RNA sequence: GGGAACGACUCGAGUAGAGUCGAAAACUUAUUUUUCAAUUUCACCUAAUAAUUCCUUUUGAAGGUACGCUCUAAAAUCCGAGGAGCCCAAGCACUUUAUCCAGUACGAUCAAGGUGAAGAUCGUUGCCACGCUCACGAGUUCGCUCGUGAGCGUGGAAAAGAAACAACAACAACAAC
Reactivity to 2A3 in 0.01 (KOAc 150mM, MgCl2 10mM, bicine 150mM(pH8.5), 24C), signal-to-noise 1, nucleotides 027 to 126: c080u110u080a140u130u110u000u010u050c180a270a300u100u060u080c020a040c040c000u040a010a010u110a170a070u050u110c080c020u260u010u040u300g300a080a070g000g010u000a010c110g000c000u000c000u020a090a160a030a220u000c050c100g020a070g000g070a000g020c000c000c000a120a050g190c050a010c020u130u150u270a120u220c020c000a020g060u110a000c070g000a000u000c000a000a000g080g010u000g010a000a190g000a000u000c000g000u000u000g000